[RMDB]
RNA sequence: GGGAACGACUCGAGUAGAGUCGAAAAGAUUACGCGUCGUUGUGGAAUCGAUACUACGCACGAGAUUCCAAGGUCUCUGUAGUACGUCCGCUGGUGACGUCUUUGGAGUCACGUUCGAUAUACGAAAGGUAUCUACAAGGUUCGCCUUGUAGAUACCAAAAGAAACAACAACAACAAC
Reactivity to 2A3 in 0.01 (KOAc 150mM, MgCl2 10mM, bicine 150mM(pH8.5), 24C), signal-to-noise 4, nucleotides 027 to 126: g050a050u100u200a090c080g020c010g020u000c000g020u040u020g010u010g040g020a040a010u070c040g010a010u010a050c060u020a020c020g020c040a030c090g000a000g000a030u070u000c060c000a050a020g120g000u010c030u000c020u120g050u040a020g040u030a020c010g010u010c020c020g040c170u110g060g090u140g010a000c000g010u010c000u000u030u050g040g000a020g000u020c010a030c070g010u010u030c030g000a040u020a010u020a140c050g040a030a040a060
Reactivity to DMS in 0.01 (KOAc 150mM, MgCl2 10mM, bicine 150mM(pH8.5), 24C), signal-to-noise 3, nucleotides 027 to 126: g000a140u010u010a040c140g020c060g000u000c020g020u010u000g010u000g010g000a050a010u000c030g000a080u010a030c090u000a040c040g010c100a050c110g000a010g000a030u000u000c110c110a050a060g010g010u010c030u010c020u030g010u030a030g010u020a030c010g010u000c000c020g000c050u020g000g030u020g010a000c020g020u000c040u000u000u020g000g000a050g000u000c110a110c050g000u010u020c040g020a080u010a100u010a040c060g000a030a080a140
Source: RMDB library OK1LIB, as collected in RNAgym. Chemical mapping of a 177-nucleotide RNA with 2A3 and DMS. Values cover nucleotides 27 to 126. Conditions: 150 mM KOAc, 10 mM MgCl2 and 150 mM bicine (pH 8.5), 24 C. As a SHAPE reagent, 2A3 marks flexible, mostly unpaired nucleotides at the ribose 2'-OH.